[RMDB]
RNA sequence: GGGAACGACUCGAGUAGAGUCGAAAAGAGUACGAGCUGGCCGAGUGUGAGGCCGGACUGCGCCCGAUGACACCCGACAACUUGCCGCUGGUCCAACGCCUGGAUUCGCGGACCCUGGUCGCGGCCGGCUUCGGACAUUUUUCGAAAUGUCCGAAGCAAAAGAAACAACAACAACAAC
Reactivity to DMS in 0.01 (KOAc 150mM, MgCl2 10mM, bicine 150mM(pH8.5), 24C), signal-to-noise 2, nucleotides 027 to 126: g000a070g040u050a090c010g000a050g000c000u000g000g020c020c010g020a170g030u010g020u000g000a170g000g030c010c000g000g000a070c010u000g010c050g000c040c000c070g020a150u000g000a110c040a170c020c140c000g000a140c130a070a060c110u020u030g010c010c000g000c000u000g020g020u000c020c000a100a200c200g000c110c080u050g020g010a030u020u000c150g000c010g020g020a040c040c030c030u000g040g000u000c050g000c030g000g020c050c030g020
Reactivity to 2A3 in 0.01 (KOAc 150mM, MgCl2 10mM, bicine 150mM(pH8.5), 24C), signal-to-noise 2, nucleotides 027 to 126: g080a000g000u150a050c040g020a030g010c020u010g030g000c010c000g040a100g070u130g050u090g090a050g060g000c000c000g000g020a020c020u030g000c020g000c010c010c000g000a040u100g020a040c010a070c040c010c010g050a010c030a160a070c040u050u080g050c000c000g030c050u100g020g010u000c010c000a090a060c070g130c020c120u040g000g020a070u160u010c020g010c020g010g010a030c010c000c010u060g010g000u020c040g010c020g070g040c010c010g030

Conditions: 150 mM KOAc, 10 mM MgCl2 and 150 mM bicine (pH 8.5), 24 C.
An RNA of 177 nucleotides, treated with DMS and 2A3 and read out base by base.
Source: RMDB library OK1LIB, as collected in RNAgym.